The record gives the reactivity of an RNA of 177 nucleotides to DMS and 2A3. DMS adducts were read by reverse transcription with MarathonRT. The data come from the RNA Mapping Database (RMDB), library TTRDES. For 2A3 the reverse transcriptase was SuperScript II with manganese. For DMS, 2,159 sequencing reads were counted.

[RMDB]
RNA sequence: GGGAACGACUCGAGUAGAGUCGAAAAGAUAUGGAGAGUCGGUGAGCCGAAGAACGACCAUCGGAAACGAUGGUCGGGAGGCUUGAACCGAGCUCUCCUAAGUCAAACAGACCGUUCGCGGUCUGAAGAUUUAUAGCGGGUUCGCCCGCUAUAAAUCAAAAGAAACAACAACAACAAC
Reactivity to DMS in 0.01 (KOAc 150mM, MgCl2 10mM, bicine 150mM(pH8.5), 24C), signal-to-noise 3, nucleotides 027 to 126: g010a100u000a300u010g000g000a010g010a020g020u000c000g020g030u000g000a030g020c020c020g000a120a150g000a190a220c000g010a010c010c000a000u000c000g010g000a160a120a150c000g020a020u000g010g000u000c000g000g000g000a060g020g000c010u010u000g010a120a040c000c020g010a060g000c000u000c020u000c000c000u000a000a060g010u000c090a170a170a290c010a000g000a030c000c020g020u000u020c280g040c010g000g000u000c000u000g010a130a150
Reactivity to 2A3 in 0.01 (KOAc 150mM, MgCl2 10mM, bicine 150mM(pH8.5), 24C), signal-to-noise 1, nucleotides 027 to 126: g020a030u090a020u170g010g000a000g000a010g010u020c020g050g000u030g020a020g010c000c000g200a300a000g030a030a020c030g030a000c010c000a030u070c000g030g050a060a070a020c000g010a020u000g000g000u000c000g000g030g000a000g000g020c000u030u050g140a040a030c030c000g030a040g090c000u000c000u000c000c000u010a030a000g010u010c000a070a050a150c000a000g000a010c080c000g050u110u110c300g040c030g120g000u030c000u000g000a060a020

The RNA was probed in 150 mM KOAc, 10 mM MgCl2 and 150 mM bicine (pH 8.5) at 24 C.
The 2A3 profile rests on 2,220 reads.
Reactivities are given for positions 27 through 126.